[RMDB]
RNA sequence: GGGAACGACUCGAGUAGAGUCGAAAAGGAUGCUCGUUCGCGAGCAUCCACUGAGAUAGCCACUAUAAAGAUUAAGUCUACCUACUCGAGACAGGAUGUCUAUGCUCCUGGCCUUCGGGCCAGGAAACUAAGCAGUUUUAUUCGUAAAACUGCUUAGAAAAGAAACAACAACAACAAC
Reactivity to DMS in 0.01 (KOAc 150mM, MgCl2 10mM, bicine 150mM(pH8.5), 24C), signal-to-noise 5, nucleotides 027 to 126: g010g000a010u000g020c000u000c010g020u000u010c210g020c020g000a010g010c010a000u000c000c010a020c120u000g000a150g010a070u000a060g010c080c110a080c080u000a110u000a090a080a090g000a100u010u010a090a120g000u000c020u000a120c040c010u000a020c000u000c000g010a020g000a110c100a090g010g010a090u000g010u010c040u000a080u010g020c110u010c000c000u000g010g010c000c000u000u010c220g040g010g000c000c010a000g000g000a000a020a130
Reactivity to 2A3 in 0.01 (KOAc 150mM, MgCl2 10mM, bicine 150mM(pH8.5), 24C), signal-to-noise 5, nucleotides 027 to 126: g000g010a010u000g010c000u010c010g020u070u100c240g010c020g100a010g000c000a000u000c010c000a000c010u040g020a030g030a060u070a030g070c090c070a120c070u140a090u140a280a190a030g100a120u130u170a140a010g040u010c020u000a020c000c000u000a010c000u000c000g010a010g070a080c040a010g110g040a090u150g050u080c020u060a110u140g080c020u010c000c000u000g000g000c000c000u020u050c190g050g000g000c000c000a000g000g010a000a000a000
This 177-nucleotide RNA was probed chemically with DMS and 2A3. For 2A3 the reverse transcriptase was SuperScript II with manganese. The RNA was probed in 150 mM KOAc, 10 mM MgCl2 and 150 mM bicine (pH 8.5) at 24 C. For 2A3, 7,017 sequencing reads were counted. For DMS the reverse transcriptase was MarathonRT. Source: RMDB library M2PK50, as collected in RNAgym.